Structure probing data (2A3) for a 177-nucleotide construct.
Reactivities are given for positions 27 through 126.
For 2A3, 437 sequencing reads were counted.

RNA sequence: GGGAACGACUCGAGUAGAGUCGAAAACUGGGAAUCCCCCUCACCGAUGAUCAGGAGGCGGUCAUCAACCUUAUUGCGAGCCUUUCUUCUGAUUCGAUUUCAGCCGCUGGGACCAAUCUGCAGGAUCUGUGUGGCUCCCUUUCGAGGGAGCCACACAAAAAGAAACAACAACAACAAC
Reactivity to 2A3 in 0.01 (KOAc 150mM, MgCl2 10mM, bicine 150mM(pH8.5), 24C), signal-to-noise 1, nucleotides 027 to 126: c020u000g010g010g010a030a070u050c060c010c010c000c000u080c000a070c000c000g030a090u050g030a000u000c030a010g000g000a030g040g010c010g000g060u000c040a130u040c000a040a090c050c030u300u140a140u140u230g050c040g020a000g020c000c000u030u170u080c000u090u000c010u040g030a080u100u120c000g030a030u070u020u130c070a010g040c000c000g020c030u060g000g080g030a050c000c000a050a040u050c010u040g000c000a000g030g010a060u070c090

Source: RMDB library OK1LIB, as collected in RNAgym.